[RMDB]
RNA sequence: GGGAACGACUCGAGUAGAGUCGAAAAGCAACGAGCGUAAUCGGGUCUUGACUAGGGAGACUGUAGGUGACGUGAGUAUCUAUCCCAGUGUGCAUAGCGCACAAUACGCUGAUCUACAGUCAAUUAAAGAAUUCCAAUAGUUCGCUAUUGGAAUUCUAAAAGAAACAACAACAACAAC
Reactivity to DMS in 0.01 (KOAc 150mM, MgCl2 10mM, bicine 150mM(pH8.5), 24C), signal-to-noise 5, nucleotides 027 to 126: g000c130a090a090c070g020a100g020c080g010u000a070a070u000c040g010g000g010u000c020u000u000g010a160c070u000a100g010g000g010a220g000a030c000u010g010u000a010g010g020u000g000a090c070g010u000g000a140g000u000a050u010c140u000a120u010c030c000c020a130g020u000g020u000g020c010a150u000a120g010c140g000c020a010c020a080a060u010a030c030g010c040u000g000a050u000c010u000a010c010a020g000u000c030a070a090u010u010a030a100
Reactivity to 2A3 in 0.01 (KOAc 150mM, MgCl2 10mM, bicine 150mM(pH8.5), 24C), signal-to-noise 4, nucleotides 027 to 126: g080c030a040a060c040g040a020g080c040g060u080a070a080u060c030g010g020g070u020c050u060u090g070a100c030u080a080g040g080g060a120g010a010c000u000g000u020a010g030g060u020g060a020c040g020u020g030a050g030u030a060u050c070u030a090u030c000c000c020a020g040u020g000u030g010c070a160u140a250g030c020g000c050a010c000a000a030u090a020c020g000c050u030g020a020u010c010u030a020c010a000g010u010c040a030a030u150u090a120a100